RNA sequence: GGGAACGACUCGAGUAGAGUCGAAAAGGGUAGAUCUUCGGAUCUACCCAAAAGGAGCAACCAACGAUGGAAGUGCUAGCAUAAGCGUGCAGGCUAGCACUAAAAGGUUCCGCUUCGGCGGAACCAAGUAAGUAUGUUUGUUCGCAAACAUACUUACAAAAGAAACAACAACAACAAC
Reactivity to 2A3 in 0.01 (KOAc 150mM, MgCl2 10mM, bicine 150mM(pH8.5), 24C), signal-to-noise 3, nucleotides 027 to 126: g000g000g000u010a000g000a000u020c020u050u070c260g020g000a000u010c000u000a000c000c000c000a000a000a000a000g020g010a060g010c010a010a050c020c000a030a060c070g120a100u130g070g130a080a030g010u000g000c000u010a010g000c000a070u050a280a050g080c070g120u100g050c080a010g000g080c000u000a000g000c000a000c000u000a000a010a000a020g000g000u000u000c010c000g000c010u030u030c190g070g000c020g000g000a000a000c000c000a000a000
Reactivity to DMS in 0.01 (KOAc 150mM, MgCl2 10mM, bicine 150mM(pH8.5), 24C), signal-to-noise 5, nucleotides 027 to 126: g020g000g020u000a010g000a010u000c010u000u010c170g030g000a010u000c000u000a010c010c000c000a000a010a040a060g000g010a090g010c040a080a120c030c020a060a090c150g010a100u020g010g010a160a030g010u000g000c000u000a010g010c000a080u010a070a120g010c090g000u000g020c070a150g000g000c000u000a000g000c000a010c000u000a010a050a090a090g000g010u000u000c000c000g010c000u000u010c150g020g010c000g000g000a000a000c000c000a020a040
The record gives the reactivity of an RNA of 177 nucleotides to 2A3 and DMS. For 2A3, 10,959 sequencing reads were counted. DMS (dimethyl sulfate) methylates the pairing face of unpaired adenines and cytosines. For 2A3 the reverse transcriptase was SuperScript II with manganese. The RNA was probed in 150 mM KOAc, 10 mM MgCl2 and 150 mM bicine (pH 8.5) at 24 C. The data come from the RNA Mapping Database (RMDB), library M2PK50.